An RNA of 177 nucleotides, treated with DMS and 2A3 and read out base by base. The data come from the RNA Mapping Database (RMDB), library OK2TRN. 2A3 adducts were read by reverse transcription with SuperScript II with manganese. The DMS profile rests on 2,305 reads.
[RMDB]
RNA sequence: GGGAACGACUCGAGUAGAGUCGAAAAGGUUCGCGUUAUGCGGUGCGCGAUGGAAUGGCGACGCUGAAUCCGCUAGCGGCACAGAUCAUCGGGCAGUUGUCGAGCUUGGAGAUCUGAAUCCGGAUCGCUACGAAACAUCGUUCGCGAUGUUUCGUAGAAAAGAAACAACAACAACAAC
Reactivity to DMS in 0.01 (KOAc 150mM, MgCl2 10mM, bicine 150mM(pH8.5), 24C), signal-to-noise 3, nucleotides 027 to 126: g010g020u000u000c010g020c060g010u010u020a100u010g020c020g010g010u010g010c070g020c000g000a100u000g010g020a100a110u000g010g030c040g010a080c050g020c080u000g020a150a090u000c010c060g040c030u000a090g010c010g030g000c260a220c040a010g000a030u000c010a090u010c020g000g000g020c020a080g010u000u010g000u010c180g000a050g010c030u000u010g010g020a070g010a020u000c010u000g000a050a110u010c120c040g010g010a070u000c090g000
Reactivity to 2A3 in 0.01 (KOAc 150mM, MgCl2 10mM, bicine 150mM(pH8.5), 24C), signal-to-noise 2, nucleotides 027 to 126: g050g060u100u050c040g000c010g000u070u080a080u190g030c050g040g000u010g000c050g000c010g020a070u080g070g110a160a090u150g080g000c070g020a070c030g050c090u090g130a080a050u060c040c000g000c000u000a030g050c000g000g000c020a000c000a100g010a020u020c020a040u040c050g000g000g000c010a060g090u230u210g180u240c040g010a030g040c000u000u020g070g010a040g000a050u030c010u000g040a050a070u090c020c020g030g000a010u030c050g040